[RMDB]
RNA sequence: GGGAACGACUCGAGUAGAGUCGAAAAGCGCCCUGGCUACGGGCACGUGGUCAACAGCGACUUCGCCGGCUACCACAUCGCCGCCAACGCCGACGCGCCGCAGGUGGAGGCCCGCUGGAUCGAGCACCAAAGCCGAUGAAUUCGUUCAUCGGCUUUGAAAAGAAACAACAACAACAAC
Reactivity to 2A3 in 0.01 (KOAc 150mM, MgCl2 10mM, bicine 150mM(pH8.5), 24C), signal-to-noise 2, nucleotides 027 to 126: g030c000g090c000c000c010u040g070g020c000u040a040c080g000g070g000c100a010c040g010u010g000g050u010c040a050a050c010a100g010c000g120a110c050u110u080c070g000c020c040g030g020c020u050a060c010c060a040c010a070u090c040g030c050c020g120c070c010a090a050c100g020c050c020g030a040c030g030c020g010c030c050g000c050a050g030g020u050g010g040a030g000g040c010c040c000g000c040u000g010g000a070u070c050g020a020g030c030a020c030
Reactivity to DMS in 0.01 (KOAc 150mM, MgCl2 10mM, bicine 150mM(pH8.5), 24C), signal-to-noise 4, nucleotides 027 to 126: g010c140g000c000c040c060u000g030g000c040u010a090c120g000g000g010c110a050c060g020u010g010g010u000c030a070a120c070a040g010c010g020a120c110u000u000c040g010c030c040g000g010c070u010a080c100c020a070c070a120u010c050g000c030c030g010c080c090a070a090c120g000c140c030g010a040c080g010c120g010c060c090g010c070a060g020g020u000g000g010a130g010g000c060c000c010g000c030u000g000g000a080u000c030g000a090g010c030a130c120

Structure probing data (2A3 and DMS) for a 177-nucleotide construct. For 2A3, 2,220 sequencing reads were counted. The reactions ran in a buffer of 150 mM KOAc, 10 mM MgCl2 and 150 mM bicine (pH 8.5), at 24 C. The data come from the RNA Mapping Database (RMDB), library OK2TRN. For DMS, 3,368 sequencing reads were counted.